Chemical mapping of a 177-nucleotide RNA with 2A3 and DMS. The RNA was probed in 150 mM KOAc, 10 mM MgCl2 and 150 mM bicine (pH 8.5) at 24 C. Values cover nucleotides 27 to 126.
[RMDB]
RNA sequence: GGGAACGACUCGAGUAGAGUCGAAAAACGGGGCUCAAGCCGGCCGCCGAUACCCCGGGGCUCCGAAAGGAGAUCCGGUAGGGGGGCGUGCCGAUGGCGCAGAAGCCUGAGGCGUAAGCUCGGGUGGUCGGUACAUCUAAUUCGUUAGAUGUACCGAAAAAGAAACAACAACAACAAC
Reactivity to 2A3 in 0.01 (KOAc 150mM, MgCl2 10mM, bicine 150mM(pH8.5), 24C), signal-to-noise 5, nucleotides 027 to 126: a000c050g030g000g010g030c020u010c040a060a000g020c010c010g000g010c000c010g000c000c000g070a120u190a190c020c000c000c000g000g000g010g010c000u010c000c000g070a080a030a020g010g000a010g010a000u010c000c000g000g010u120a140g000g000g000g000g000g000c010g060u150g000c000c010g040a050u070g020g000c030g000c070a040g050a160a000g000c000c000u010g020a030g020g020c040g030u120a060a020g010c000u000c000g000g010g010u070g010g020
Reactivity to DMS in 0.01 (KOAc 150mM, MgCl2 10mM, bicine 150mM(pH8.5), 24C), signal-to-noise 5, nucleotides 027 to 126: a090c090g010g010g000g020c010u000c060a110a260g010c020c000g000g020c030c020g010c010c010g020a150u030a130c030c030c000c000g020g000g000g000c010u000c000c000g000a100a110a130g000g010a020g000a030u000c000c000g010g030u010a070g000g000g010g000g010g000c010g020u020g020c000c000g000a070u020g010g000c050g010c130a100g010a140a120g010c010c010u000g000a160g010g010c010g000u040a270a160g000c010u000c020g010g000g000u000g000g020